[RMDB]
RNA sequence: GGGAACGACUCGAGUAGAGUCGAAAAUACAUCCAGCAGAACUCGGCGGGCCGCGCGGUCAUCGUCACCGGCGACUUCAACGCGCGGUACUCCGACGACCAAAGCGCUCUGUUGCAAUUUGCGCAGGAAGUGGCAUAUAAUUCGUUAUAUGCCACUUAAAAGAAACAACAACAACAAC
Reactivity to 2A3 in 0.01 (KOAc 150mM, MgCl2 10mM, bicine 150mM(pH8.5), 24C), signal-to-noise 5, nucleotides 027 to 126: u180a020c060a060u040c030c020a020g000c010a020g010a050a020c010u000c010g020g000c010g020g030g010c000c000g000c000g000c010g020g060u060c030a020u010c010g080u040c040a100c300c140g050g020c010g010a020c010u120u070c120a070a060c010g000c000g000c000g010g000u010a010c010u000c000c010g000a000c010g010a010c000c030a070a060a000g020c030g020c040u030c020u050g060u110u260g000c020a110a200u060u080u230g000c010g000c010a000g040g030
Reactivity to DMS in 0.01 (KOAc 150mM, MgCl2 10mM, bicine 150mM(pH8.5), 24C), signal-to-noise 9, nucleotides 027 to 126: u010a150c180a110u010c020c020a150g020c050a060g010a110a140c300u000c010g010g010c050g000g000g020c010c010g020c020g020c030g010g000u000c220a090u000c020g010u000c070a110c260c150g010g010c020g010a020c090u010u010c140a090a120c010g000c000g010c020g010g000u000a020c100u010c010c010g000a070c020g000a090c050c030a060a120a090g000c030g010c100u000c020u000g010u010u010g020c040a130a170u000u010u000g010c010g010c020a050g010g010

Structure probing data (2A3 and DMS) for a 177-nucleotide construct. Source: RMDB library OK2TST, as collected in RNAgym. For DMS, 16,478 sequencing reads were counted. High 2A3 reactivity points to a flexible backbone, as in loops and unpaired stretches.